[RMDB]
RNA sequence: GGGAACGACUCGAGUAGAGUCGAAAAUACUGAGUGCUGUAACAAUAGACUAGGAUACUGUUCCAAAAUAGAGUAGAAUAAUCUUAAUUUUCCUAUGCACUCAGAGGGGGAGAUAGGAGAAAGAGUCAGGAGUUAUGGUAUUCGUACCAUAACUCCUAAAAGAAACAACAACAACAAC
Reactivity to DMS in 0.01 (KOAc 150mM, MgCl2 10mM, bicine 150mM(pH8.5), 24C), signal-to-noise 2, nucleotides 027 to 126: u010a110c010u020g020a030g040u000g020c010u020g000u000a090a120c170a100a080u000a050g010a020c050u000a040g000g020a300u000a050c030u000g000u010u010c110c080a100a120a080a180u010a050g020a050g000u000a030g000a220a130u000a040a060u000c010u030u000a090a050u000u000u000u000c030c010u000a090u000g010c010a020c010u010c000a010g010a160g030g000g000g010g010a110g000a100u000a060g020g010a070g000a040a060a060g000a080g020u020c160
Reactivity to 2A3 in 0.01 (KOAc 150mM, MgCl2 10mM, bicine 150mM(pH8.5), 24C), signal-to-noise 2, nucleotides 027 to 126: u120a030c010u010g010a000g020u010g000c020u020g070u280a090a080c090a100a040u060a100g040a040c040u020a020g000g050a020u020a060c010u070g130u110u130c030c020a050a040a040a130u200a030g110a000g030u030a020g030a090a060u100a050a010u010c020u030u070a090a090u160u050u010u070c000c010u050a070u190g000c000a000c000u000c000a010g000a000g000g030g000g020g000a060g000a050u120a010g080g060a080g030a060a110a020g040a020g110u080c040
Structure probing data (DMS and 2A3) for a 177-nucleotide construct.
The DMS profile rests on 1,328 reads.
For 2A3, 996 sequencing reads were counted.
The reactions ran in a buffer of 150 mM KOAc, 10 mM MgCl2 and 150 mM bicine (pH 8.5), at 24 C.
It was measured as part of the RMDB library OK2TRN.